The record gives the reactivity of an RNA of 177 nucleotides to 2A3 and DMS.
The DMS profile rests on 2,951 reads.
High 2A3 reactivity points to a flexible backbone, as in loops and unpaired stretches.
The data come from the RNA Mapping Database (RMDB), library M2PK90.
2A3 adducts were read by reverse transcription with SuperScript II with manganese.
[RMDB]
RNA sequence: GGGAACGACUCGAGUAGAGUCGAAAAAAAGUGUACGAAAGAACAAAGAAGCAAUCAAACCGAGUAGUGAAAUGAUGGCUUCAGUCCAAAAUCGGCAAACACUACAGACGGAGCCAAAGGCAAUUAAUCCUCUUUAAGGUUUCGACCUUAAAGAGGAAAAAGAAACAACAACAACAAC
Reactivity to 2A3 in 0.01 (KOAc 150mM, MgCl2 10mM, bicine 150mM(pH8.5), 24C), signal-to-noise 1, nucleotides 027 to 126: a000a000a020g040u020g000u030a050c010g030a090a070a090g050a080a000c010a020a040a090g040a030a010g000c040a010a040u000c010a070a060a070c040c050g000a020g080u150a010g000u100g040a050a060a150u070g020a010u010g010g020c000u080u050c010a010g060u000c020c000a000a090a090a090u020c010g010g000c040a020a080a000c010a010c010u090a030c020a020g150a010c070g030g020a010g000c000c010a000a050a060g010g000c000a010a000u020u050a140a040
Reactivity to DMS in 0.01 (KOAc 150mM, MgCl2 10mM, bicine 150mM(pH8.5), 24C), signal-to-noise 3, nucleotides 027 to 126: a050a060a030g010u010g010u000a090c030g010a050a070a060g010a080a040c100a050a100a160g020a040a040g000c040a050a040u010c030a050a070a180c130c030g000a150g020u000a050g040u000g000a080a060a090u000g000a020u000g000g010c020u000u000c030a050g030u030c020c030a040a030a150a070u000c070g000g000c120a070a040a050c030a000c030u000a080c080a060g000a090c070g000g000a090g010c010c040a020a050a050g020g010c140a050a090u000u010a080a150